[RMDB]
Conditions: 150 mM KOAc, 10 mM MgCl2 and 150 mM bicine (pH 8.5), 24 C. Chemical mapping of a 170-nucleotide RNA with 2A3 and DMS. For DMS, 2,086 sequencing reads were counted.
RNA sequence: GGGAACGACUCGAGUAGAGUCGAAAAGGCAUAUUGACAGGCUGUUUUAGUUUUGCCAAGAUGUUAUUUAUGCUUCCACUAGCUUACUUUAGUGAUUCAAAACUCGGCACCACAGAGGUUAAAGUGAAACGCGUGCCCUUCGGGGCACGCAAAAGAAACAACAACAACAAC
Reactivity to 2A3 in 0.01 (KOAc 150mM, MgCl2 10mM, bicine 150mM(pH8.5), 24C), signal-to-noise 2, nucleotides 027 to 129: g050g000c000a000u000a000u000u150g090a000c000a000g000g050c020u000g190u050u210u000u080a090g000u050u070u220u190g000c000c000a050a070g140a090u060g070u090u040a210u040u110u020a020u070g010c000u030u140c040c000a000c040u030a000g000c000u090u190a170c000u040u170u020a040g050u120g140a050u010u060c000a000a000a000a110c020u040c000g040g000c020a000c010c000a000c040a100g000a000g000g000u030u110a050a000a000g000u000g000a110a000a000c160
Reactivity to DMS in 0.01 (KOAc 150mM, MgCl2 10mM, bicine 150mM(pH8.5), 24C), signal-to-noise 1, nucleotides 027 to 129: g020g000c030a010u000a080u000u000g000a000c000a030g000g150c010u000g030u090u070u120u000a000g030u000u000u050u080g020c040c050a110a240g080a180u000g070u070u070a070u040u090u000a040u000g000c050u000u050c000c000a130c010u050a180g020c100u040u020a000c100u000u000u050a050g050u000g010a000u060u010c040a130a000a160a230c060u000c080g060g040c140a110c000c000a000c070a040g040a030g010g010u000u080a000a090a040g050u060g000a010a130a100c040

High 2A3 reactivity points to a flexible backbone, as in loops and unpaired stretches.